The record gives the reactivity of an RNA of 207 nucleotides to 2A3 and DMS. The reactions ran in a buffer of 150 mM KOAc, 10 mM MgCl2 and 150 mM bicine (pH 8.5), at 24 C. The DMS profile rests on 3,165 reads.
RNA sequence: GGGAACGACUCGAGUAGAGUCGAAAAAGAACCCAAAGCAGGAAGUGGAGGCAAGUUCACCAGAUCCUUCUUUCUGGGCUCCAAACAGCAUCAUCACCUUGAAGGGGAAGAGAACAGUUUACUUUCCCAUUUUCAUUCCAGUGUGACACAGAUAUCAUAGUACCACUAUGUUCGCAUAGUGGUACUAAAAAGAAACAACAACAACAAC
Reactivity to 2A3 in 0.01 (KOAc 150mM, MgCl2 10mM, bicine 150mM(pH8.5), 24C), signal-to-noise 4, nucleotides 027 to 156: a010g020a020a060c000c000c030a090a020a010g030c050a020g050g010a150a030g030u060g030g030a070g020g020c080a110a060g050u090u100c030a030c070c000a030g010a140u020c010c020u060u060c020u050u070u040c030u050g000g060g000c020u030c050c010a050a090a130c010a030g070c000a010u090c000a010u010c010a080c000c000u040u040g040a070a070g030g000g020g020a020a020g040a000g000a080a020c090a050g060u170u150u090a050c000u020u030u020c000c010c000a050u100u020u050u090c080a070u030u040c030c010a010g020u030g000u020g280a020c050a010c010a160g140a080u230a000u280c190a050
Reactivity to DMS in 0.01 (KOAc 150mM, MgCl2 10mM, bicine 150mM(pH8.5), 24C), signal-to-noise 2, nucleotides 027 to 156: a050g010a070a110c020c010c040a040a050a110g030c080a110g020g010a030a090g000u000g020g020a110g070g000c120a120a060g020u010u010c040a190c030c000a060g000a140u010c090c030u000u000c060u000u000u000c020u000g000g030g020c010u020c000c020a110a100a060c070a080g030c030a060u000c050a130u000c010a080c020c000u000u010g000a070a110g000g010g000g000a080a020g020a050g010a020a050c100a110g010u010u010u000a150c060u000u000u000c010c020c000a260u000u000u020u000c020a050u010u000c060c070a150g010u010g000u000g010a050c070a100c030a130g010a090u000a050u000c050a230